The data come from the RNA Mapping Database (RMDB), library PSEUDOB. Structure probing data (2A3 and DMS) for a 207-nucleotide construct. For 2A3, 3,044 sequencing reads were counted.

RNA sequence: GGGAACGACUCGAGUAGAGUCGAAAAGGGAUCGUCAGUGCAUUGAGAUGUUUCUCAGACUGAUUAUCGUGAGACAGUGAUCUCGUGGUCAGUCCUAGUUUGGGGGCUGGUCCUCACGGUGGUAUCCCCAAGGGGUAAAAAGACACGUUCGCGUGUCACCCUACUAGUCGUUCGCGACUAGUAGGGUAAAAGAAACAACAACAACAAC
Reactivity to 2A3 in 0.01 (KOAc 150mM, MgCl2 10mM, bicine 150mM(pH8.5), 24C), signal-to-noise 3, nucleotides 027 to 156: g030g000g000a020u020c030g020u000c020a000g000u030g100c120a270u110u110g030a020g010a020u110g250u180u300u030c010u010c000a000g020a020c000u000g010a020u030u060a020u020c010g000u020g000a020g020a040c120a120g060u050g100a100u050c050u020c080g080u070g020g000u000c000a000g010u000c000c000u050a100g060u070u220u220g060g000g000g000g000c010u010g000g020u030c000c010u010c000a000c010g000g010u030g060g020u130a050u070c010c000c000c010a080a110g050g010g000g000u080a020a030a000a020a080g000a000c000a000c020g030u050u050c190g010c020g060u000g020u000c000
Reactivity to DMS in 0.01 (KOAc 150mM, MgCl2 10mM, bicine 150mM(pH8.5), 24C), signal-to-noise 2, nucleotides 027 to 156: g010g020g010a010u000c030g010u010c010a050g010u000g020c120a200u010u010g010a030g020a110u000g010u010u010u010c000u010c010a090g000a080c010u020g010a040u010u000a040u000c030g000u010g010a080g010a230c100a190g010u010g000a190u010c040u020c050g020u000g030g010u000c000a040g010u000c010c000u000a110g030u000u000u020g010g070g000g000g030c010u000g020g000u000c030c040u000c010a030c030g010g000u000g030g020u000a090u000c010c000c010c040a090a110g000g000g040g030u010a040a080a090a070a080g010a020c000a010c000g040u000u010c230g000c020g040u000g010u000c000

For 2A3 the reverse transcriptase was SuperScript II with manganese.